[RMDB]
RNA sequence: GGGAACGACUCGAGUAGAGUCGAAAAGAUAUGGAUUGGGUAGACAUGCCUACUCGGAAACGAGAGGCAACAGCUACUACAAUCCUAAGUCAAAACUCGAUAGGUGCGUUCGCGCACCUAUCGAGAACGCAAGGUAGAAGUUCGCUUCUACCUUGCGAAAAGAAACAACAACAACAAC
Reactivity to DMS in 0.01 (KOAc 150mM, MgCl2 10mM, bicine 150mM(pH8.5), 24C), signal-to-noise 1, nucleotides 027 to 126: g020a050u000a300u020g000g000a020u000u000g010g020g020u000a010g000a080c040a300u030g000c000c010u000a060c040u000c000g010g040a090a090a170c000g000a010g010a030g010g030c000a020a060c230a120g000c010u000a000c000u010a130c010a010a000u010c000c000u000a010a140g000u000c040a060a060a090a140c000u010c000g000a010u000a000g020g040u000g000c000g010u000u010c220g030c000g000c020a000c000c000u020a000u010c000g000a020g030a020a060
Reactivity to 2A3 in 0.01 (KOAc 150mM, MgCl2 10mM, bicine 150mM(pH8.5), 24C), signal-to-noise 2, nucleotides 027 to 126: g010a010u050a040u170g000g010a020u010u040g000g000g030u000a010g010a080c070a170u110g040c030c000u210a300c040u110c020g020g030a030a040a020c010g020a000g000a000g040g000c000a030a010c070a010g050c000u000a000c000u120a280c000a000a000u000c010c000u000a080a020g030u010c030a000a000a090a170c000u000c000g000a000u000a000g010g030u000g000c020g040u070u060c250g000c030g000c080a010c020c010u000a000u000c000g000a000g010a000a000